An RNA of 207 nucleotides, treated with 2A3 and DMS and read out base by base. For 2A3 the reverse transcriptase was SuperScript II with manganese.
RNA sequence: GGGAACGACUCGAGUAGAGUCGAAAACAGUCCAUUUACAGCAUUGAUUGAUGAAUGGAAUGAGAAACGCGCUAAAAUCCUAGCAGAAGAAAAGCGCAUCCAAGCUGAGAAAGAAUUGGCCGAGCAAAUCGAGCGUGACCAUGAAGAAGCGUUGCAACGCUAUUAUCUCAUUCGUGAGAUAAUAGCGAAAAGAAACAACAACAACAAC
Reactivity to 2A3 in 0.01 (KOAc 150mM, MgCl2 10mM, bicine 150mM(pH8.5), 24C), signal-to-noise 5, nucleotides 027 to 156: c020a010g040u000c010c000a000u010u010u060a060c040a020g070c070a110u100u210g160a170u140u080g080a160u120g000a060a010u010g000g020a010a040u060g020a040g050a120a090a020c080g020c000g000c020u070a120a070a040a090u040c020c030u070a090g050c080a030g060a100a000g030a020a100a010a010g000c000g010c000a000u010c020c010a030a020g000c020u050g010a020g080a140a130a010g080a050a080u070u070g030g000c040c020g020a040g100c050a070a080a070u040c010g000a000g010c000g000u010g020a040c000c020a050u120g010a020a080g050a050a010g050c020g050u010u020g000c040a040a010
Reactivity to DMS in 0.01 (KOAc 150mM, MgCl2 10mM, bicine 150mM(pH8.5), 24C), signal-to-noise 3, nucleotides 027 to 156: c020a110g000u000c010c010a040u000u010u000a150c040a160g000c070a150u000u000g020a210u000u020g020a150u020g010a020a070u010g020g010a020a050u010g010a230g000a110a090a090c090g050c020g020c030u030a050a070a180a190u000c030c010u010a190g050c110a080g010a060a060g010a080a070a120a080g010c000g010c060a090u000c040c030a060a150g010c030u000g010a090g000a070a080a140g000a070a170u000u000g010g020c010c010g000a130g010c010a040a090a120u010c100g000a070g010c020g030u010g010a150c030c020a050u000g000a060a140g010a070a130g000c040g040u000u000g050c040a030a160

Reactivities are given for positions 27 through 156. The RNA was probed in 150 mM KOAc, 10 mM MgCl2 and 150 mM bicine (pH 8.5) at 24 C.